[RMDB]
RNA sequence: GGGAACGACUCGAGUAGAGUCGAAAAAAUAGCGGGUCAAGGUACAACGCAGAGAGAUAGGCUCAUCCCAAGUUCACUUCGGAGUACCAAGACUUCGGUACAGAAGAGAUACCGACUCUUCAUAGAAGACCUAUUAAUUCUUCGGAAUUAAUAGGUCAAAAGAAACAACAACAACAAC
Reactivity to 2A3 in 0.01 (KOAc 150mM, MgCl2 10mM, bicine 150mM(pH8.5), 24C), signal-to-noise 3, nucleotides 027 to 126: a000a010u170a040g060c040g010g010g000u010c030a030a050g000g000u020a010c010a030a020c040g030c050a000g030a000g000a000g000a050u060a120g050g000c030u040c040a130u100c020c010c000a030a020g090u060u050c040a020c030u030u030c040g030g020a020g000u020a000c010c010a010a010g010a010c000u130u090c040g020g030u140a090c040a090g010a010a000g010a020g000a050u090a120c020c000g030a050c010u000c000u020u010c010a030u080a060g190a130a010
Reactivity to DMS in 0.01 (KOAc 150mM, MgCl2 10mM, bicine 150mM(pH8.5), 24C), signal-to-noise 4, nucleotides 027 to 126: a060a050u010a040g010c030g030g000g010u000c020a030a300g000g010u000a020c010a020a210c030g000c140a040g000a090g010a070g000a090u000a160g010g010c050u000c270a140u010c300c000c000a050a100g010u020u000c030a120c020u000u000c010g020g000a300g000u010a010c020c020a010a300g000a020c030u000u000c020g030g000u000a020c140a170g000a010a010g000a000g000a070u000a170c050c020g010a080c020u000c000u000u010c020a140u020a140g000a120a100
The data come from the RNA Mapping Database (RMDB), library M2PK90. The record gives the reactivity of an RNA of 177 nucleotides to 2A3 and DMS. The RNA was probed in 150 mM KOAc, 10 mM MgCl2 and 150 mM bicine (pH 8.5) at 24 C. For 2A3, 3,994 sequencing reads were counted.